[RMDB]
Source information: Conditions: 150 mM KOAc, 10 mM MgCl2 and 150 mM bicine (pH 8.5), 24 C. An RNA of 177 nucleotides, treated with 2A3 and read out base by base. For 2A3 the reverse transcriptase was SuperScript II with manganese. The 2A3 profile rests on 721 reads.
RNA sequence: GGGAACGACUCGAGUAGAGUCGAAAAUCUUGCGGCGUUCCCUGCUCUUCGAUUUGCCCCUUUUCGAGGAAGAGAACCUUGCUCGAUACGUCGCGAGCAAAACCCAUUUCGUGCGUCACCACGACCAGAUCCCUCGCUCAUUCGUGAGCGAGGGAUCAAAAGAAACAACAACAACAAC
Reactivity to 2A3 in 0.01 (KOAc 150mM, MgCl2 10mM, bicine 150mM(pH8.5), 24C), signal-to-noise 1, nucleotides 027 to 126: u020c020u030u040g000c010g010g000c000g030u020u070c020c000c040u000g090c010u000c030u070u070c020g040a150u020u090u300g050c000c000c000c000u010u010u000u030c000g010a010g000g030a130a040g060a000g000a020a010c020c010u020u080g000c000u000c000g020a070u020a090c020g120u000c020g000c000g010a010g010c030a030a100a090a040c040c000c010a070u070u140u090c080g030u070g070c050g080u020c010a030c040c000a090c040g010a030c040c040a000
Source: RMDB library OK1LIB, as collected in RNAgym.